[RMDB]
RNA sequence: GGGAACGACUCGAGUAGAGUCGAAAAGGUCUUGCCCAAACCCGUUCCACCGUAGAUAAACAGAGGGUUGUAAGCGUAUCCAGGGUUUUCAGCCACCUGCAUUGCCGCCGCCCGGGCCAGUUGGUUGAACAGGAAAUCUGUUCGCAGAUUUCCUGUUAAAAGAAACAACAACAACAAC
Reactivity to DMS in 0.01 (KOAc 150mM, MgCl2 10mM, bicine 150mM(pH8.5), 24C), signal-to-noise 1, nucleotides 027 to 126: g000g000u000c080u010u010g020c050c010c030a050a080a090c040c020c010g000u000u020c030c000a070c090c110g020u000a050g000a120u010a050a110a110c050a050g010a110g020g000g020u000u000g020u000a060a090g010c040g000u000a040u010c080c040a110g020g000g000u010u000u000u000c040a050g020c030c010a070c060c030u000g030c020a130u020u010g000c040c030g020c040c040g030c030c000c050g020g000g010c020c070a060g020u000u000g000g010u010u000g020

The record gives the reactivity of an RNA of 177 nucleotides to DMS. Reactivities are given for positions 27 through 126. Conditions: 150 mM KOAc, 10 mM MgCl2 and 150 mM bicine (pH 8.5), 24 C.